[RMDB]
RNA sequence: GGGAACGACUCGAGUAGAGUCGAAAAGCUAUUGUUGGAAUCACCGUACCUAUUUAGGUUUACGCUCCAAGAUCGGUGGAUAGCAGCCCUAUCAAUAUCUAGGAGAACUGUGCUAUGUUUAGACGAUUAAAUCGACGCAUCUUCGGAUGCGUCGAAAGUCAGUUUAUUACUUCGGUAAUAAACUGACAAAAGAAACAACAACAACAAC
Reactivity to DMS in 0.01 (KOAc 150mM, MgCl2 10mM, bicine 150mM(pH8.5), 24C), signal-to-noise 2, nucleotides 027 to 156: g000c000u000a020u000u000g020u010u010g030g020a150a170u020c030a040c060c000g020u000a020c000c030u010a240u030u000u010a010g080g020u000u000u000a070c040g000c070u000c030c040a070a090g020a030u000c030g030g040u010g000g010a070u000a020g000c000a160g020c100c050c000u000a150u000c000a100a090u010a120u000c120u010a100g000g010a070g010a040a080c040u000g020u000g040c060u000a070u000g000u000u010u000a120g010a080c050g010a160u000u000a040a100a140u000c010g010a060c000g020c000a010u010c000u010u020c300g050g000a000u010g000c010g020u000c010g000a000a010a060
Reactivity to 2A3 in 0.01 (KOAc 150mM, MgCl2 10mM, bicine 150mM(pH8.5), 24C), signal-to-noise 3, nucleotides 027 to 156: g000c010u020a010u060u150g150u120u240g150g100a130a120u200c010a000c010c000g010u030a020c010c000u060a180u240u180u300a000g010g000u040u050u030a030c040g000c020u010c020c010a020a040g000a010u000c030g000g010u010g020g030a000u000a010g010c030a040g000c010c000c000u040a120u160c060a060a060u040a010u180c010u010a010g000g020a020g040a060a060c090u090g030u030g130c030u100a040u180g100u060u090u070a060g030a090c110g010a120u120u190a040a100a130u020c000g000a010c000g000c000a000u010c000u040u000c080g110g000a000u020g000c000g000u000c000g000a000a000a000
This 207-nucleotide RNA was probed chemically with DMS and 2A3. For DMS the reverse transcriptase was MarathonRT. The reactions ran in a buffer of 150 mM KOAc, 10 mM MgCl2 and 150 mM bicine (pH 8.5), at 24 C.